[RMDB]
RNA sequence: GGGAACGACUCGAGUAGAGUCGAAAACCAGGACGCUGCCUCUAAUAUCUUUGUUAUUAACAAGGACACUUAUGCAGCUCUUAGAAACUCUUUAACUAAUGAUGCCUAUUCACGAUUUUUGGGGUUGACGGGUUGCUCUUCGGAGCAACCAAAAGAAACAACAACAACAAC
Reactivity to DMS in 0.01 (KOAc 150mM, MgCl2 10mM, bicine 150mM(pH8.5), 24C), signal-to-noise 2, nucleotides 027 to 129: c050c010a030g030g020a030c270g060c040u030g030c000c030u040c040u010a000a020u010a190u030c000u070u000u000g030u000u020a210u050u100a150a000c000a080a000g010g010a040c030a050c300u010u010a000u100g000c020a040g030c020u050c000u080u060a120g040a160a080a020c060u010c010u030u020u010a000a000c200u020a050a160u010g010a050u090g010c060c000u040a000u030u050c000a000c180g020a130u090u020u010u050u010g020g000g000g010u030u010g050a060c000g060
Reactivity to 2A3 in 0.01 (KOAc 150mM, MgCl2 10mM, bicine 150mM(pH8.5), 24C), signal-to-noise 5, nucleotides 027 to 129: c010c000a000g030g010a000c140g000c000u000g020c000c000u030c000u000a000a000u000a000u010c030u000u000u000g020u010u060a300u220u270a100a000c000a000a000g020g000a000c000a020c100u000u010a000u090g000c010a010g030c000u000c000u010u100a040g010a010a010a000c010u050c010u040u130u140a080a040c070u040a100a050u070g060a020u060g020c000c030u110a130u100u080c060a010c110g110a160u000u020u020u030u060g030g000g000g010u020u010g060a070c110g030
This 170-nucleotide RNA was probed chemically with DMS and 2A3. For DMS, 5,804 sequencing reads were counted. For DMS the reverse transcriptase was MarathonRT. It was measured as part of the RMDB library 15KLIB.